[RMDB]
RNA sequence: GGGAACGACUCGAGUAGAGUCGAAAAGGUUUCACCUUCGGGUGAAACCAAAUAAUAGUCGCUAGAAAACGAUCAAUACUAGCGACUUACAUAACGAUCGAAAAAGAAUGGUGUUCGCACCAUUCAAGUAUUAUAAUAUCUUCGGAUAUUAUAAUACAAAAGAAACAACAACAACAAC
Reactivity to DMS in 0.01 (KOAc 150mM, MgCl2 10mM, bicine 150mM(pH8.5), 24C), signal-to-noise 2, nucleotides 027 to 126: g020g000u000u000u010c010a000c000c010u000u020c220g080g020g040u000g000a000a000a010c000c000a010a050a030u010a100a080u010a030g000u000c000g020c000u000a000g000a120a060a090a040c040g020a000u000c010a220a120u000a090c000u000a010g010c000g000a010c000u000u010a020c170a100u000a070a110c220g010a020u000c010g010a130a110a090a150a110g000a000a000u000g010g000u000g000u010u030c190g040c010a000c000c000a010u000u000c000a060a080
Reactivity to 2A3 in 0.01 (KOAc 150mM, MgCl2 10mM, bicine 150mM(pH8.5), 24C), signal-to-noise 2, nucleotides 027 to 126: g010g000u000u010u000c020a010c000c000u010u040c220g060g010g000u000g000a000a000a000c000c010a000a000a000u010a000a000u050a010g010u000c000g000c000u010a010g040a080a100a050a080c030g000a030u050c030a060a040u020a120c000u000a000g010c010g010a000c000u000u020a010c000a030u170a130a090c070g000a000u040c020g030a050a030a000a020a090g020a000a010u020g000g020u030g000u050u070c180g020c060a000c000c000a000u000u000c010a010a000
The data come from the RNA Mapping Database (RMDB), library M2PK50. The record gives the reactivity of an RNA of 177 nucleotides to DMS and 2A3. The 2A3 profile rests on 4,729 reads. The RNA was probed in 150 mM KOAc, 10 mM MgCl2 and 150 mM bicine (pH 8.5) at 24 C. For DMS the reverse transcriptase was MarathonRT. 2A3 adducts were read by reverse transcription with SuperScript II with manganese.